[RMDB]
Chemical mapping of a 177-nucleotide RNA with 2A3 and DMS. For DMS the reverse transcriptase was MarathonRT. Conditions: 150 mM KOAc, 10 mM MgCl2 and 150 mM bicine (pH 8.5), 24 C. The 2A3 profile rests on 1,067 reads. 2A3 adducts were read by reverse transcription with SuperScript II with manganese. For DMS, 4,115 sequencing reads were counted. It was measured as part of the RMDB library OK2TST.
RNA sequence: GGGAACGACUCGAGUAGAGUCGAAAAAGAUCACAGUUCCACCGAUCGACAGCCUGGUAGAUAUUGUGAAAUCCGUUAUUGGGGAGCAAGGUGGUGUUCGUAUGACUGGCGGUGGUUUUGGCGGCUGACCGCCUAAAGACUUCGGUCUUUAGGCGGUAAAAGAAACAACAACAACAAC
Reactivity to 2A3 in 0.01 (KOAc 150mM, MgCl2 10mM, bicine 150mM(pH8.5), 24C), signal-to-noise 1, nucleotides 027 to 126: a000g080a080u040c010a000c000a030g060u010u070c020c020a030c050c070g060a100u110c040g070a000c030a060g060c000c000u030g000g020u010a060g010a060u090a050u250u080g050u000g060a070a050a060u040c010c000g040u000u180a150u170u140g040g000g000g000a010g040c000a010a070g100g050u040g020g130u040g070u120u050c070g000u120a070u110g130a100c010u010g020g000c020g020g020u010g040g000u000u000u060u150g020g020c030g000g050c050u060g060
Reactivity to DMS in 0.01 (KOAc 150mM, MgCl2 10mM, bicine 150mM(pH8.5), 24C), signal-to-noise 3, nucleotides 027 to 126: a110g000a120u010c030a060c060a050g020u000u000c010c030a050c040c060g000a090u000c070g010a110c120a070g010c070c030u020g010g020u000a050g010a040u010a030u000u010g020u010g010a040a080a090u010c030c040g000u000u010a100u010u010g000g010g000g000a110g020c070a040a080g010g020u000g000g010u000g000u000u010c060g000u000a060u000g010a050c090u000g000g000c050g020g030u000g010g010u000u000u000u000g010g000c050g020g010c080u000g000